Conditions: 150 mM KOAc, 10 mM MgCl2 and 150 mM bicine (pH 8.5), 24 C. Chemical mapping of a 177-nucleotide RNA with 2A3 and DMS. The DMS profile rests on 4,899 reads.
RNA sequence: GGGAACGACUCGAGUAGAGUCGAAAAGAUAUGGACGAUCGAUAAGCUGACCUCGGAAACGAGGUUCAGCUUUUGACGAUCAGUCCUAAGUCAAAGGACAACUCUGUCUUCGGACAGAGUUGUCCAAGUCAUGAUUCUAGUUCGCUAGAAUCAUGACAAAAGAAACAACAACAACAAC
Reactivity to 2A3 in 0.01 (KOAc 150mM, MgCl2 10mM, bicine 150mM(pH8.5), 24C), signal-to-noise 1, nucleotides 027 to 126: g010a050u100a070u080g010g010a010c000g000a010u010c020g030a050u000a120a060g010c000u030g000a010c000c000u030c000g000g020a130a060a050c000g010a000g010g000u040u040c000a020g000c010u020u000u000u010g010a000c010g010a000u010c070a040g000u000c000c000u000a080a000g040u000c060a140a080a190g000g000a010c010a010a010c000u000c000u000g040u040c000u080u160c300g060g000a000c000a000g000a000g010u010u010g000u030c000c000a010a000
Reactivity to DMS in 0.01 (KOAc 150mM, MgCl2 10mM, bicine 150mM(pH8.5), 24C), signal-to-noise 4, nucleotides 027 to 126: g000a040u000a300u000g000g010a010c010g000a010u000c000g030a190u010a030a010g010c000u000g000a030c000c000u000c000g010g000a070a090a180c000g010a010g000g000u000u000c000a010g010c000u000u000u000u010g000a160c120g010a000u000c010a070g030u000c000c000u000a020a080g000u000c040a060a110a160g000g010a020c000a000a010c000u000c000u010g010u010c000u000u010c180g020g000a010c000a010g010a000g010u000u000g000u010c000c000a000a010